[RMDB]
RNA sequence: GGGAACGACUCGAGUAGAGUCGAAAAGAUAUGGAUCCGUAGGAGUCUCAUGAAUCGAAAAUCCUGAUCGGAAACGAUCAGGAUUUUCGAUUCAUGGGAGGACGCGAAACUACAGGAUCCUAAGUCACGAAUAUUGAAACUUCGGUUUCAAUAUUCGAAAAGAAACAACAACAACAAC
Reactivity to DMS in 0.01 (KOAc 150mM, MgCl2 10mM, bicine 150mM(pH8.5), 24C), signal-to-noise 1, nucleotides 027 to 126: g000a020u000a300u020g000g010a020u000c000c000g010u000a020g010g000a300g000u000c000u000c000a040u000g000a030a000u000c020g000a050a020a000a000u000c040c030u000g010a030u030c030g000g000a150a030a250c020g000a000u000c010a020g010g000a000u000u000u000u000c020g020a000u000u000c010a000u000g010g000g010a060g000g010a090c260g050c200g020a160a090a220c000u000a000c000a260g000g010a020u010c010c000u000a040a070g000u000c020a300